[RMDB]
RNA sequence: GGGAACGACUCGAGUAGAGUCGAAAAAGCAGGAGAGCGACGAGGUGCUGGAACACACCUACCACUUGGGAAGCAGUCGAGCUAUGAAAUCCUGGAACUCGGCAAUUAUAAUCGAUGAUAUAGUAUCGAUGAUUAUCCGAUUCGUCGGAUAAUCAUCAAAAGAAACAACAACAACAAC
Reactivity to DMS in 0.01 (KOAc 150mM, MgCl2 10mM, bicine 150mM(pH8.5), 24C), signal-to-noise 4, nucleotides 027 to 126: a080g030c030a080g000g000a040g010a080g010c050g000a110c070g010a050g020g030u020g010c070u000g000g020a110a090c190a180c060a080c050c020u000a120c090c040a120c080u010u020g000g000g000a060a040g000c020a100g000u000c010g010a010g010c060u010a030u010g000a030a090a070u020c020c020u020g000g000a070a060c020u010c040g010g000c040a070a050u020u060a080u010a090a070u040c040g000a070u020g000a070u020a090u010a070g000u010a060u020c090
Reactivity to 2A3 in 0.01 (KOAc 150mM, MgCl2 10mM, bicine 150mM(pH8.5), 24C), signal-to-noise 7, nucleotides 027 to 126: a020g050c030a000g030g040a060g020a010g040c040g060a050c040g030a030g050g020u050g010c030u070g040g090a120a010c060a000c010a010c080c000u040a100c010c050a060c070u060u090g070g010g040a050a000g040c020a000g030u040c010g010a020g000c030u040a050u150g070a040a080a070u050c020c010u020g030g030a020a030c010u000c000g000g000c010a010a060u300u120a090u140a190a080u130c100g040a050u030g080a030u060a020u020a200g180u060a100u080c090